The record gives the reactivity of an RNA of 177 nucleotides to 2A3 and DMS. The DMS profile rests on 3,075 reads. 2A3 adducts were read by reverse transcription with SuperScript II with manganese. The 2A3 profile rests on 1,987 reads. The reactions ran in a buffer of 150 mM KOAc, 10 mM MgCl2 and 150 mM bicine (pH 8.5), at 24 C.
[RMDB]
RNA sequence: GGGAACGACUCGAGUAGAGUCGAAAAUUCGUUGAUUUGACCGGAGAUAUAAGGUUCCAAUGCACCGAAGUCCCACUUCAAGUCUGGCAAGGUGACUUUGGUUCUCCUUGCUGUGGUGGAGAGCAAAAUCAUAGUCGCGAUUCGUCGCGACUAUGAUAAAAGAAACAACAACAACAAC
Reactivity to 2A3 in 0.01 (KOAc 150mM, MgCl2 10mM, bicine 150mM(pH8.5), 24C), signal-to-noise 3, nucleotides 027 to 126: u000u000c000g020u030u030g000a040u000u010u040g020a000c000c000g140g100a130g110a080u260a080u090a210a100g050g000u150u030c010c000a010a010u120g140c010a010c010c080g000a000a000g060u070c010c010c000a000c010u010u020c030a030a110g130u010c010u040g000g020c000a010a010g020g010u010g020a020c000u080u130u260g130g020u180u030c020u010c000c000u000u000g000c010u010g030u000g010g030u010g000g000a030g000a010g040c140a110a090a020
Reactivity to DMS in 0.01 (KOAc 150mM, MgCl2 10mM, bicine 150mM(pH8.5), 24C), signal-to-noise 2, nucleotides 027 to 126: u050u010c010g000u000u000g010a060u000u010u000g000a060c000c000g020g010a230g000a210u030a120u040a070a130g020g010u040u080c090c090a020a040u000g010c040a050c050c030g000a030a030g010u000c000c000c040a130c000u010u000c000a110a040g000u070c000u020g000g000c010a010a010g000g000u000g020a000c000u060u060u060g010g000u040u000c010u000c020c010u000u000g010c000u000g000u010g000g000u020g020g000a020g010a160g000c200a030a020a140